The record gives the reactivity of an RNA of 177 nucleotides to DMS and 2A3.
[RMDB]
RNA sequence: GGGAACGACUCGAGUAGAGUCGAAAAAAGGUGCCAUCAUAUCGGUUAAGAACUCUUAACUCUGAUGGCUUUCGAGUUAUGUGGUGCAUUGAAGCUCUCCCUUCAAAUGGUCGUACAGAUCCGUGAAUCAGGUAAGACUAUUCGUAGUCUUACCUGAAAAAGAAACAACAACAACAAC
Reactivity to DMS in 0.01 (KOAc 150mM, MgCl2 10mM, bicine 150mM(pH8.5), 24C), signal-to-noise 7, nucleotides 027 to 126: a080a080g010g010u000g010c010c000a010u010c000a060u000a110u010c250g010g010u000u000a010a010g000a230a140c300u010c000u000u000a000a010c000u000c090u000g010a010u000g000g010c020u000u000u000c040g010a090g000u000u010a040u010g010u000g010g020u000g000c030a080u000u000g000a070a060g000c050u000c050u000c050c050c010u000u000c050a040a070a100u010g000g020u000c020g020u010a070c110a090g000a050u000c020c090g010u000g010a080a120
Reactivity to 2A3 in 0.01 (KOAc 150mM, MgCl2 10mM, bicine 150mM(pH8.5), 24C), signal-to-noise 1, nucleotides 027 to 126: a000a000g100g000u050g010c030c020a000u010c000a020u080a070u200c070g020g000u020u010a010a030g060a300a260c080u020c010u280u000a000a000c020u000c030u090g010a000u010g000g000c000u010u040u020c010g000a010g000u120u050a070u130g060u030g070g030u080g050c040a080u030u100g070a030a030g000c000u030c000u020c020c000c000u000u040c020a080a090a060u090g000g010u030c020g000u040a070c030a110g030a060u000c000c010g080u080g070a030a080

It was measured as part of the RMDB library M2PK90.